[RMDB]
RNA sequence: GGGAACGACUCGAGUAGAGUCGAAAAGAAAGAAAGAAGGUGGACCUGAUGUCCCUGAGUGUAUGUGGUGAACCUGAAUUUGCCUUGGGUUUCCUCAUAUUCAUUCAGGAGUGUCAGUUGCCCCUAAUUAUCGACUGGUAUUCGUACCAGUCGAUAAAAAAGAAACAACAACAACAAC
Reactivity to DMS in 0.01 (KOAc 150mM, MgCl2 10mM, bicine 150mM(pH8.5), 24C), signal-to-noise 3, nucleotides 027 to 126: g000a120a100a070g020a080a120a080g000a120a030g020g020u050g020g010a100c200c000u000g000a010u000g000u000c020c010c010u010g010a020g000u000g000u000a000u000g020u020g010g000u000g020a010a000c000c000u020g000a030a060u040u040u040g020c280c140u000u000g000g000g000u000u020u010c020c000u000c000a010u000a000u000u020c000a020u000u000c000a000g010g000a100g000u000g000u000c000a010g000u000u040g010c010c000c000c010u000a070a090
Reactivity to 2A3 in 0.01 (KOAc 150mM, MgCl2 10mM, bicine 150mM(pH8.5), 24C), signal-to-noise 7, nucleotides 027 to 126: g090a010a050a010g140a030a050a030g160a060a030g040g070u240g020g030a040c000c000u000g000a000u020g150u210c000c000c000u000g000a000g000u010g000u000a000u000g020u000g000g030u100g040a000a000c000c000u020g030a070a100u130u100u300g110c070c030u020u050g030g000g000u020u070u020c010c000u040c000a000u020a010u040u060c000a000u000u000c000a000g010g050a040g010u030g000u000c000a000g000u040u140g070c000c000c000c000u020a040a110